[RMDB]
RNA sequence: GGGAACGACUCGAGUAGAGUCGAAAAUAUUGAUAGCCACUUAUGUUUAUAGUAUCAGCUUUCUGGUUCGCUGUUAGCAACUGUGCACGUUGCUACAUCCAGAGCAAGUUCUUUUACAGCGGGCAACCCGGUGCGUACUGUUCGCAGUACGCACCGGAAAAGAAACAACAACAACAAC
Reactivity to 2A3 in 0.01 (KOAc 150mM, MgCl2 10mM, bicine 150mM(pH8.5), 24C), signal-to-noise 2, nucleotides 027 to 126: u300a090u070u110g090a010u170a010g000c000c000a170c120u040u080a300u140g120u080u070u040a160u090a000g010u080a030u120c090a050g080c010u120u160u050c000u000g080g160u190u250c180g010c070u030g070u150u000a000g000c010a000a030c000u160g040u300g150c100a000c300g000u020u000g000c050u000a010c000a000u030c000c000a010g000a000g030c000a040a040g010u030u000c000u000u000u050u050a010c040a050g000c110g000g000g020c000a000a000c000